[RMDB]
RNA sequence: GGGAACGACUCGAGUAGAGUCGAAAAAGGGGCCAAAAUGCCGAACGAAGGGAACGCGGGGGAAGGAUCAUAUGACGAGAGGGGAUGAGCUGGUAAAGAGGGGUGGAACGUCGGGUGGAAGCACUCCAUAGGUCAACCUUCGGGUUGACCAAAAGAAACAACAACAACAAC
Reactivity to DMS in 0.01 (KOAc 150mM, MgCl2 10mM, bicine 150mM(pH8.5), 24C), signal-to-noise 1, nucleotides 027 to 129: a100g120g010g000g070c090c140a130a060a070a060u000g010c050c010g000a070a060c120g000a040a140g020g010g010a000a040c120g000c080g000g000g010g000g060a000a000g050g000a070u010c050a120u050a010u030g030a000c110g000a060g020a010g010g050g000g050a080u020g000a160g070c020u010g000g070u050a050a060a000g040a100g000g030g040g050u110g070g000a030a030c050g000u000c130g000g000g050u040g000g000a100a010g000c080a110c070u050c000c150a070u000a000
Reactivity to 2A3 in 0.01 (KOAc 150mM, MgCl2 10mM, bicine 150mM(pH8.5), 24C), signal-to-noise 1, nucleotides 027 to 129: a000g010g000g080g000c010c070a050a110a000a000u250g020c000c000g020a000a000c010g020a020a010g000g000g000a000a000c010g040c000g020g000g000g000g000a000a000g000g030a000u000c020a040u020a050u130g080a000c010g030a030g000a040g130g000g020g030a040u070g000a000g090c130u030g020g060u140a050a050a000g000a040g010g000g000g000u030g010g000a110a000c000g070u060c000g000g000g000u000g000g030a060a000g050c000a050c020u000c010c000a000u160a050
Background:
The record gives the reactivity of an RNA of 170 nucleotides to DMS and 2A3. 2A3 adducts were read by reverse transcription with SuperScript II with manganese. The 2A3 profile rests on 1,663 reads. Source: RMDB library 15KLIB, as collected in RNAgym. High 2A3 reactivity points to a flexible backbone, as in loops and unpaired stretches.